[RMDB]
RNA sequence: GGGAACGACUCGAGUAGAGUCGAAAAGCUGCCUCUGACGUCCUUCUCCCCCGGAAACGGGGCCGAAGGGUGGUAAAGCGAGUCGCCUGGCGCUUGCACGGGUAUGCGUGGGGGUCGACCCUGGCCGGGUCCAUUUACCAUUCGUGGUAAAUGGACCAAAAGAAACAACAACAACAAC
Reactivity to 2A3 in 0.01 (KOAc 150mM, MgCl2 10mM, bicine 150mM(pH8.5), 24C), signal-to-noise 1, nucleotides 027 to 126: g040c010u020g030c000c000u160c040u050g070a060c010g060u060c000c000u010u000c020u050c000c010c000c020c000g000g000a030a010a000c010g000g000g000g030c030c000g020a000a000g020g000g010u040g010g020u120a110a090a000g010c000g000a000g080u100c030g040c010c060u090g060g060c030g020c120u040u140g000c020a060c040g050g000g050u150a020u260g010c000g000u080g000g070g000g000g010u040c040g010a160c000c000c030u030g040g040c010c030g070
Reactivity to DMS in 0.01 (KOAc 150mM, MgCl2 10mM, bicine 150mM(pH8.5), 24C), signal-to-noise 1, nucleotides 027 to 126: g020c010u010g000c040c000u000c090u000g010a110c020g010u010c000c000u010u000c010u000c300c000c000c010c000g010g000a050a090a220c000g000g010g000g030c050c040g000a000a010g010g000g000u000g000g000u000a050a070a100g020c030g000a030g010u010c090g010c020c020u000g010g020c030g020c050u000u000g040c040a060c130g000g010g000u010a030u040g010c030g000u010g010g000g000g020g010u000c040g010a080c030c000c000u000g010g000c050c050g010
The data come from the RNA Mapping Database (RMDB), library OK2TRN. This 177-nucleotide RNA was probed chemically with 2A3 and DMS. DMS (dimethyl sulfate) methylates the pairing face of unpaired adenines and cytosines. For 2A3 the reverse transcriptase was SuperScript II with manganese. The RNA was probed in 150 mM KOAc, 10 mM MgCl2 and 150 mM bicine (pH 8.5) at 24 C. For 2A3, 1,444 sequencing reads were counted. Values cover nucleotides 27 to 126. The DMS profile rests on 1,561 reads.